[RMDB]
RNA sequence: GGGAACGACUCGAGUAGAGUCGAAAAAUGUAGUUCUUAUGUUUUUGUACCAUGUGUGUUUUGGAUGUGAAAAACCAAACUGUGUUGCAUGUUCUAAGAGUGCACGUUUGACACGUAUACCUGUUCAGCCAACCGUAUAGUUCGCUAUACGGUUGGCAAAAGAAACAACAACAACAAC
Reactivity to DMS in 0.01 (KOAc 150mM, MgCl2 10mM, bicine 150mM(pH8.5), 24C), signal-to-noise 1, nucleotides 027 to 126: a030u000g010u010a050g010u000u010c080u000u020a000u000g000u000u010u030u000u000g020u000a100c080c020a050u000g020u010g020u020g010u000u000u010u020g030g010a080u000g020u010g020a070a080a020a090a070c000c000a010a020a050c080u010g030u010g000u000u000g030c000a020u000g020u000u000c060u010a030a030g000a090g000u000g010c060a050c040g010u020u000u000g000a120c060a020c070g000u000a070u010a110c060c030u020g020u010u000c170a120